[RMDB]
RNA sequence: GGGAACGACUCGAGUAGAGUCGAAAAACUGCCAUACGUGGCAGAAACACGCCUUACCAGGACUAAACAGCGUGUCUAAAAAACAGUCCUUCAUACCGGAUCUGGAGGGUAGAUCAGGAAUACUAAAAAAAUCGGGUGAAGUUCGCUUCACCCGAAAUCGAGUAGGAAGGUUCGCCUUCCUACUCGAAAAAGAAACAACAACAACAAC
Reactivity to 2A3 in 0.01 (KOAc 150mM, MgCl2 10mM, bicine 150mM(pH8.5), 24C), signal-to-noise 2, nucleotides 027 to 156: a000c000u000g000c010c000a020u020a070c230g120u020g000g000c000a000g030a010a010a000c000a000c000g000c010c000u020u070a020c020c040a000g000g000a010c000u060a100a030a030c020a000g000c000g040u020g020u040c130u060a000a000a010a010a000a000c020a000g010u000c040c030u000u090c060a060u050a160c000c020g010g000a020u010c000u060g080g010a060g080g040g050u110a010g020a030u020c030a020g050g010a060a080u200a220c040u200a090a010a040a020a060a060a120u030c000g000g000g010u000g000a010a000g000u020u060c130g020c090u000u010c000a000c010c000c000g000a000a000a000